[RMDB]
RNA sequence: GGGAACGACUCGAGUAGAGUCGAAAAUCACAGACUCAAAGCCUUCAAGCUUUUCUAUCCGCGACUGAUAAUAGUUUCCGCAACACAUAUGUUCUACUCCUACACCCAUCAUCUGUAGAUGUUGAAACAGCUGAAGUAUUUGCCAAAAUGCUCGCCAGUAAGGCGAAGGUUUCGACCUUCGCCUUACAAAAGAAACAACAACAACAAC
Reactivity to 2A3 in 0.01 (KOAc 150mM, MgCl2 10mM, bicine 150mM(pH8.5), 24C), signal-to-noise 1, nucleotides 027 to 156: u060c010a000c020a130g060a060c020u090c070a030a010a090g000c000c030u120u170c080a110a070g000c000u170u100u100u030c050u050a250u070c070c080g030c060g020a050c040u030g060a050u050a180a100u110a090g020u010u080u020c060c020g020c060a060a010c050a010c010a060u030a080u160g070u010u030c000u020a000c000u010c000c040u050a020c020a060c060c010c010a060u100c000a030u090c040u010g010u000a010g010a080u070g010u050u040g060a170a030a000c000a020g040c070u080g030a030a000g030u040a060u000u040u050g100c010c010a020a300a000a000u100g030c010u080c040g060c070c000a030

Conditions: 150 mM KOAc, 10 mM MgCl2 and 150 mM bicine (pH 8.5), 24 C. Chemical mapping of a 207-nucleotide RNA with 2A3. The 2A3 profile rests on 508 reads. Values cover nucleotides 27 to 156.